[RMDB]
The record gives the reactivity of an RNA of 207 nucleotides to 2A3 and DMS. DMS adducts were read by reverse transcription with MarathonRT. For 2A3, 1,463 sequencing reads were counted. The DMS profile rests on 2,188 reads. The RNA was probed in 150 mM KOAc, 10 mM MgCl2 and 150 mM bicine (pH 8.5) at 24 C.
RNA sequence: GGGAACGACUCGAGUAGAGUCGAAAAAGCGAGAUUUGAGGUCCAUGAAUUUGAAAAUCUGCUCUUUUCCAGUCUCAGGAUCCACCGGUGGAAGAUAUUCGUUGAGAAUCAGGAACUUCAUUUGAUGCACGUAGUAAUCCAAAAUAUAAACAAUACCAGUUAUAUUUGUUUUCGAACAAAUAUAACUAAAAGAAACAACAACAACAAC
Reactivity to 2A3 in 0.01 (KOAc 150mM, MgCl2 10mM, bicine 150mM(pH8.5), 24C), signal-to-noise 3, nucleotides 027 to 156: a000g040c040g030a060g010a030u040u090u100g020a020g000g080u020c050c030a100u070g070a120a110u140u120u100g030a060a070a030a040u020c050u070g020c010u030c010u080u050u010u000c000c000a030g080u050c020u010c090a060g040g010a050u030c030c000a020c080c040g040g020u030g040g050a040a020g010a030u080a060u080u130c040g020u040u080g030a040g020a050a040u060c020a040g050g010a050a030c020u040u020c040a080u020u040u100g040a060u100g020c030a010c090g070u060a030g040u060a070a050u000c040c000a060a040a080a010u140a030u120a100a130a050c050a070a020u250a110c230c150
Reactivity to DMS in 0.01 (KOAc 150mM, MgCl2 10mM, bicine 150mM(pH8.5), 24C), signal-to-noise 1, nucleotides 027 to 156: a060g010c050g000a100g000a080u000u000u010g020a050g000g020u010c030c040a130u000g000a100a090u000u010u000g000a190a050a090a040u000c040u000g010c010u000c020u000u000u000u000c020c020a120g020u010c060u000c040a100g030g030a090u000c000c030a040c020c040g030g000u010g010g030a110a070g010a150u000a090u000u000c070g010u010u000g010a220g000a060a060u010c040a040g000g010a070a090c080u000u000c030a060u020u000u010g010a110u010g010c020a020c050g020u000a110g030u010a080a110u020c020c020a040a040a080a110u010a120u010a060a070a080c030a020a120u000a060c110c070